[RMDB]
RNA sequence: GGGAACGACUCGAGUAGAGUCGAAAAUCCUUUUAACUGCAGUGAGGUCACCUCCUGGGUUUGUGACAUAGCAGUGGUUGCCACCGAGAUGAUAGCUUUAUCAGCAACUCUGCUUUGCAAUGACUUCAUCAACUUUUCAUUUCGAUGAAAAGUUGAUAAAAGAAACAACAACAACAAC
Reactivity to 2A3 in 0.01 (KOAc 150mM, MgCl2 10mM, bicine 150mM(pH8.5), 24C), signal-to-noise 8, nucleotides 027 to 126: u000c020c000u040u060u040u100a100a050c060u180g060c030a020g020u070g200a020g000g040u180c040a090c170c010u000c000c010u010g020g020g000u040u040u110g120u070g020a060c010a020u050a000g000c000a000g010u040g090g030u010u000g000c030c030a130c070c110g110a110g010a140u140g020a040u060a060g110c080u130u170u020a050u050c010a010g000c010a000a000c000u000c010u010g000c030u010u020u020g000c010a030a090u100g050a080c020u030u020c050
Reactivity to DMS in 0.01 (KOAc 150mM, MgCl2 10mM, bicine 150mM(pH8.5), 24C), signal-to-noise 7, nucleotides 027 to 126: u010c010c000u010u030u030u020a020a070c110u010g010c030a020g020u040g020a040g010g010u010c170a130c060c010u000c040c030u010g000g010g000u000u010u010g020u000g030a190c030a020u000a020g010c010a000g010u030g010g010u010u000g010c010c110a120c260c180g000a090g010a120u010g000a040u010a070g010c220u010u010u010a040u010c050a130g000c010a020a020c010u000c000u000g010c000u000u000u000g000c070a070a070u020g000a100c070u000u000c200

Structure probing data (2A3 and DMS) for a 177-nucleotide construct.
It was measured as part of the RMDB libraries RFM100 and RFMREP.